The record gives the reactivity of an RNA of 177 nucleotides to 2A3 and DMS. The RNA was probed in 150 mM KOAc, 10 mM MgCl2 and 150 mM bicine (pH 8.5) at 24 C.
[RMDB]
RNA sequence: GGGAACGACUCGAGUAGAGUCGAAAAGGAGCACCGCCAGUAGCUACAGCCAACGUCCUGACGACCAGGACACGGGCUCUGAACCCUCAGGCCGCGGCGCCGCCGUGAGGACACGGCGCAGAGGGCACGUCAGGACAUGUUUCGACAUGUCCUGACGAAAAGAAACAACAACAACAAC
Reactivity to 2A3 in 0.01 (KOAc 150mM, MgCl2 10mM, bicine 150mM(pH8.5), 24C), signal-to-noise 2, nucleotides 027 to 126: g030g010a000g000c030a070c280c010g030c050c040a060g060u110a020g060c010u120a160c040a080g020c020c000a060a020c110g000u020c000c000u040g090a170c080g060a080c150c000a030g000g020a010c010a010c040g000g020g010c000u000c010u030g070a050a040c020c010c000u050c060a040g100g000c010c000g100c030g100g020c040g030c000c010g000c040c020g010u040g030a150g060g060a030c000a010c080g010g020c030g050c030a020g060a100g060g030g030c030a030
Reactivity to DMS in 0.01 (KOAc 150mM, MgCl2 10mM, bicine 150mM(pH8.5), 24C), signal-to-noise 2, nucleotides 027 to 126: g000g000a050g000c000a090c020c000g000c100c050a120g030u000a050g000c060u000a080c260a110g000c010c020a080a230c160g010u000c000c010u000g000a290c080g050a080c190c020a000g020g000a000c000a080c170g020g000g000c020u000c010u000g030a060a240c060c040c010u000c060a160g020g010c050c040g020c040g000g030c000g000c030c040g010c000c000g000u030g000a100g000g000a260c090a060c040g010g010c010g060c040a050g000a060g000g010g000c140a060
Background: Values cover nucleotides 27 to 126. For 2A3, 1,916 sequencing reads were counted. The DMS profile rests on 1,211 reads.